RNA sequence: GGGAACGACUCGAGUAGAGUCGAAAAACAAGCUGCACGUGCGUGCGAGCAGUUUUCGAAAUCGCACGUUUCACGUAAUGACGCAACUCUACUCGAGAAAGCGAGUCACGCAGACAGCGUCAAGGAAGGAGAUGUAAUAGUUCGCUAUUACAUCUCCAAAAGAAACAACAACAACAAC
Reactivity to DMS in 0.01 (KOAc 150mM, MgCl2 10mM, bicine 150mM(pH8.5), 24C), signal-to-noise 6, nucleotides 027 to 126: a090c170a070a120g010c040u000g000c280a040c000g020u000g010c050g010u000g010c000g010a010g020c160a170g000u000u010u000u010c130g000a050a120a090u000c020g000c010a050c020g010u010u010u000c010a040c050g030u000a090a110u000g010a160c060g010c050a120a040c000u000c000u000a000c010u000c000g000a010g000a020a070a110g000c020g000a090g000u000c080a040c060g010c050a070g000a090c120a100g010c010g000u000c050a080a090g010g010a120a110
Reactivity to 2A3 in 0.01 (KOAc 150mM, MgCl2 10mM, bicine 150mM(pH8.5), 24C), signal-to-noise 7, nucleotides 027 to 126: a000c070a030a040g060c050u070g010c060a000c010g030u030g020c010g000u000g010c010g010a040g080c090a060g030u050u030u150u260c060g070a060a060a060u020c010g000c010a000c010g000u050u160u150c020a010c010g010u040a030a080u110g040a020c050g000c040a000a020c000u000c000u000a010c000u000c000g000a000g010a010a000a000g020c000g010a020g090u060c020a010c090g030c020a040g060a230c050a050g030c000g010u040c060a060a050g100g020a110a100